[RMDB]
RNA sequence: GGGAACGACUCGAGUAGAGUCGAAAACACGUCUUGUGAUGUGGGACUGGGUGUUGGACAGUCUAUCCAGCUACCGGUGUCGGGAUCUGGAUGCCUACCUGGUACAGAAUAUCACCUGUGACAGUAGCGAAUGUAGCAAGUUCGCUUGCUACAUUCGAAAAGAAACAACAACAACAAC
Reactivity to 2A3 in 0.01 (KOAc 150mM, MgCl2 10mM, bicine 150mM(pH8.5), 24C), signal-to-noise 4, nucleotides 027 to 126: c030a000c010g030u000c050u130u160g050u090g040a010u020g010u040g030g050g060a010c010u010g000g060g020u080g040u140u090g070g020a020c060a060g020u000c020u020a020u000c000c000a010g000c020u040a050c010c040g100g170u290g280u300c030g040g000g000a030u040c000u000g010g020a030u050g010c000c010u030a060c000c000u000g020g020u040a030c010a030g150a120a020u120a040u120c030a030c040c050u080g060u080g060a020c030a050g040u080a010g090
Reactivity to DMS in 0.01 (KOAc 150mM, MgCl2 10mM, bicine 150mM(pH8.5), 24C), signal-to-noise 4, nucleotides 027 to 126: c050a090c060g020u000c030u010u020g020u010g010a020u000g000u000g000g010g020a020c020u000g020g000g010u000g020u000u010g010g010a130c100a090g010u010c100u000a090u000c000c000a010g010c120u000a150c010c010g000g010u010g010u010c010g030g010g000a080u000c010u010g010g010a020u000g010c050c000u000a050c060c020u000g010g000u000a010c020a080g000a210a080u010a080u000c110a050c050c140u000g000u000g000a030c060a070g020u000a120g000